[RMDB]
Record summary: Structure probing data (2A3) for a 207-nucleotide construct. For 2A3, 395 sequencing reads were counted.
RNA sequence: GGGAACGACUCGAGUAGAGUCGAAAAAAUUACAUGUUCCCCACCAUCACCAUAUGUUUACCUAAUGUGAGCUCAUUGCUUUUAGGCUGAUAGGUACUUCACAAAUGGUAGGGAAAAGGUGGAAUAGGAAUAAGCUGCUGGACAUGGGUCUUGAUGAGACGAUCCGAUUAUUCGUAAUCGGAUCGUCAAAAGAAACAACAACAACAAC
Reactivity to 2A3 in 0.01 (KOAc 150mM, MgCl2 10mM, bicine 150mM(pH8.5), 24C), signal-to-noise 1, nucleotides 027 to 156: a000a000u230u210a000c030a030u060g000u000u000c000c060c000c000a010c000c000a030u070c010a010c000c000a030u030a080u170g080u060u100u010a000c010c000u110a170a000u110g100u020g080a020g000c010u020c070a170u090u080g050c070u230u150u150u080a110g030g000c000u030g050a070u030a020g020g050u000a080c070u060u060c010a010c000a090a030a050u220g030g020u010a100g010g100g000a040a170a020a040g000g000u020g060g000a030a080u110a110g000g110a000a010u070a220a000g010c030u160g030c030u050g020g030a000c000a050u030g110g060g000u000c070u000u000g030a070u030g010a010